Background
Conditions: 150 mM KOAc, 10 mM MgCl2 and 150 mM bicine (pH 8.5), 24 C. Chemical mapping of a 177-nucleotide RNA with 2A3 and DMS. DMS (dimethyl sulfate) methylates the pairing face of unpaired adenines and cytosines.

RNA sequence: GGGAACGACUCGAGUAGAGUCGAAAAGAUAUGGAUAUAGAACUACAGCUAAGGCUCGACGAUCUCGGAAACGAGGGAGAGCCGAUGCUGCUAUAUCCUAAGUCAAACAGAGACUUCGGUCUCUGAAGAGACCUAUGAACUUCGGUUCAUAGGUCUCAAAAGAAACAACAACAACAAC
Reactivity to 2A3 in 0.01 (KOAc 150mM, MgCl2 10mM, bicine 150mM(pH8.5), 24C), signal-to-noise 1, nucleotides 027 to 126: g040a020u140a020u130g020g030a000u000a000u010a070g050a150a080c090u200a110c300a010g000c010u090a190a050g020g000c030u030c070g150a300c030g000a110u000c010u000c000g020g050a050a080a020c000g020a000g000g000g000a040g000a010g030c010c000g000a000u020g000c000u000g000c010u020a000u010a010u000c000c000u000a070a010g050u050c030a050a080a160c000a010g010a000g000a050c000u080u040c260g150g000u000c000u000c030u010g010a090a040
Reactivity to DMS in 0.01 (KOAc 150mM, MgCl2 10mM, bicine 150mM(pH8.5), 24C), signal-to-noise 1, nucleotides 027 to 126: g010a030u000a300u000g010g010a010u000a000u000a000g040a010a060c010u040a300c020a030g000c000u000a120a300g010g000c000u000c000g040a130c300g030a000u000c000u030c030g000g010a020a170a230c010g020a040g000g020g030a030g000a000g000c000c000g000a000u000g000c000u000g000c000u000a000u000a040u000c000c000u030a010a130g000u000c010a120a140a300c010a020g000a030g000a000c000u000u000c180g060g000u000c000u000c000u000g000a130a140
DMS adducts were read by reverse transcription with MarathonRT.